An RNA of 177 nucleotides, treated with DMS and 2A3 and read out base by base. For 2A3, 2,148 sequencing reads were counted. The reactions ran in a buffer of 150 mM KOAc, 10 mM MgCl2 and 150 mM bicine (pH 8.5), at 24 C. Reactivities are given for positions 27 through 126. For 2A3 the reverse transcriptase was SuperScript II with manganese. It was measured as part of the RMDB library OK2TRN.
RNA sequence: GGGAACGACUCGAGUAGAGUCGAAAACUAGGCUAGGUACGUACCAGACGAUCGAUCGUCCAUGAGUACGUACCGACAUGACUAGAGACAUGGCAGCUAGUGCGUACGACAUGGCGAUCCAUGGUACAUCGCCCAUACCGUUCGCGGUAUGGGCGAUAAAAGAAACAACAACAACAAC
Reactivity to DMS in 0.01 (KOAc 150mM, MgCl2 10mM, bicine 150mM(pH8.5), 24C), signal-to-noise 3, nucleotides 027 to 126: c020u000a020g000g000c050u000a090g000g050u000a010c060g020u000a000c000c000a120g010a050c040g010a120u020c300g020a070u000c020g020u000c000c080a070u000g010a170g020u000a010c010g030u000a010c010c030g000a010c130a070u010g020a040c020u000a080g000a180g010a100c030a020u000g010g010c230a250g010c030u010a030g040u000g000c030g010u000a060c140g000a110c040a000u000g010g010c050g000a100u010c020c040a040u000g000g020u010a070c210
Reactivity to 2A3 in 0.01 (KOAc 150mM, MgCl2 10mM, bicine 150mM(pH8.5), 24C), signal-to-noise 2, nucleotides 027 to 126: c030u020a010g070g000c030u040a000g010g020u040a000c010g000u000a000c000c010a020g020a020c010g030a080u250c120g050a160u040c000g070u000c060c050a200u120g020a000g070u010a000c000g000u020a000c000c000g010a000c000a040u080g000a020c010u060a030g020a000g000a110c040a040u060g030g020c050a000g020c030u060a050g120u030g040c000g060u140a100c060g090a050c050a010u010g030g000c010g020a020u010c020c000a030u040g000g000u060a060c080